[RMDB]
RNA sequence: GGGAACGACUCGAGUAGAGUCGAAAAUGACGUCGUUUCGACGACGUCAACAUAAAAUCAGCGGUAAAUAAUUACGAGGCGUUACCGCUGAACGCCUCCAUACGAGAGGGCUAUUCGUAGCCCUCAAGUCAUGUUAAACCUUCGGGUUUAACAUGACAAAAGAAACAACAACAACAAC
Reactivity to DMS in 0.01 (KOAc 150mM, MgCl2 10mM, bicine 150mM(pH8.5), 24C), signal-to-noise 3, nucleotides 027 to 126: u000g000a010c010g030u000c000g010u000u000u020c180g030a020c000g000a010c000g010u010c000a040a090c190a060u010a070a040a090a050u000c020a000g020c020g000g000u000a020a020a020u000a050a040u000u020a100c140g010a020g010g010c020g010u000u000a090c040c000g030c000u000g010a020a020c000g000c000c000u000c000c300a060u010a040c190g010a230g010a010g000g000g000c000u000a010u000u020c160g020u000a000g000c000c000c010u000c000a000a060
Reactivity to 2A3 in 0.01 (KOAc 150mM, MgCl2 10mM, bicine 150mM(pH8.5), 24C), signal-to-noise 5, nucleotides 027 to 126: u060g000a000c000g000u000c010g000u000u060u110c230g060a020c000g000a000c000g000u000c000a000a010c000a020u230a020a130a010a100u030c000a000g030c010g100g130u140a040a080a050u110a090a110u200u160a110c060g000a000g010g000c010g010u000u020a120c000c000g000c000u000g000a000a000c000g010c000c000u000c040c010a090u120a150c090g010a030g000a000g220g000g000c000u010a030u030u070c120g020u010a000g010c010c000c000u000c000a000a000
An RNA of 177 nucleotides, treated with DMS and 2A3 and read out base by base. High DMS reactivity at an A or C suggests that its Watson-Crick edge is free. For DMS the reverse transcriptase was MarathonRT. For 2A3 the reverse transcriptase was SuperScript II with manganese. High 2A3 reactivity points to a flexible backbone, as in loops and unpaired stretches. It was measured as part of the RMDB library M2PK50.